[RMDB]
RNA sequence: GGGAACGACUCGAGUAGAGUCGAAAAAAAAAGAUAUGGAGAAGAACUACAAUCCGAAGUGGCUAUGAAGUUUGCUCGGAAACGAGCAAAUGGAGCCAUGUAUGGAUUGCUUCUCCUAAGUCAAAAACCCUAUAGUACUGUUCGCAGUACUAUAGGGAAAAGAAACAACAACAACAAC
Reactivity to 2A3 in 0.01 (KOAc 150mM, MgCl2 10mM, bicine 150mM(pH8.5), 24C), signal-to-noise 2, nucleotides 027 to 126: a000a030a000a090a260g030a030u110a030u100g020g000a000g000a010a000g010a080a000c120u210a090c300a020a000u050c000c000g080a200a020g040u010g010g000c000u080a290u300g020a010a000g010u010u020u020g010c030u000c010g000g040a030a050a020c010g000a020g000c010a000a000a000u010g000g000a010g010c020c000a000u270g010u010a060u070g000g020a000u000u000g000c000u000u000c000u000c000c000u000a040a000g000u010c040a050a000a050a160a150
Reactivity to DMS in 0.01 (KOAc 150mM, MgCl2 10mM, bicine 150mM(pH8.5), 24C), signal-to-noise 3, nucleotides 027 to 126: a110a020a040a120a100g000a030u000a140u010g000g010a010g020a030a020g000a140a010c090u050a300c020a000a000u000c000c000g010a140a300g010u000g010g010c000u000a240u010g010a120a200g000u000u000u000g010c010u000c010g010g000a040a040a040c000g040a010g020c000a000a000a010u000g000g010a000g010c000c000a000u000g010u000a150u020g000g000a010u010u000g010c000u000u000c000u000c000c000u000a010a100g010u010c010a060a070a080a080a100